[RMDB]
RNA sequence: GGGAACGACUCGAGUAGAGUCGAAAAGCGCGCGUGUAUUUCCUUGGUGUGAGUGUGUUGAUAUGUGUUUUGUUUUGGGCGGUGAGGGGUGUGUGCCUGUAAAUAGAAUAGGUGUCAAAGGCGCGCGGGAUAUAUAUAAAUUCGUUUAUAUAUAUCCAAAAGAAACAACAACAACAAC
Reactivity to DMS in 0.01 (KOAc 150mM, MgCl2 10mM, bicine 150mM(pH8.5), 24C), signal-to-noise 5, nucleotides 027 to 126: g010c010g000c010g000c010g020u010g000u020a060u010u010u000c000c020u010u010g000g010u000g010u010g010a090g010u010g010u010g010u000u010g010a090u020a070u010g010u000g000u000u010u000u000g000u000u010u010u010g010g000g000c080g000g010u010g010a090g000g000g010g010u010g010u020g010u020g010c010c000u010g010u010a040a070a120u020a090g010a050a060u010a050g010g010u010g010u020c050a050a100a090g000g000c010g010c010g030c030g010
Reactivity to 2A3 in 0.01 (KOAc 150mM, MgCl2 10mM, bicine 150mM(pH8.5), 24C), signal-to-noise 2, nucleotides 027 to 126: g020c000g000c000g000c010g000u060g010u040a090u000u060u030c020c000u010u050g030g000u040g010u020g020a110g010u140g010u020g000u000u060g030a040u000a040u070g080u010g010u010u000u020u010g050u020u000u040u010g020g000g040c050g020g020u150g020a040g000g030g000g010u050g000u000g010u000g010c010c000u010g020u090a030a080a060u060a020g010a000a000u040a020g040g020u020g020u020c000a020a010a010g030g000c000g000c000g000c010g000
Structure probing data (DMS and 2A3) for a 177-nucleotide construct. For 2A3 the reverse transcriptase was SuperScript II with manganese. The RNA was probed in 150 mM KOAc, 10 mM MgCl2 and 150 mM bicine (pH 8.5) at 24 C. DMS adducts were read by reverse transcription with MarathonRT.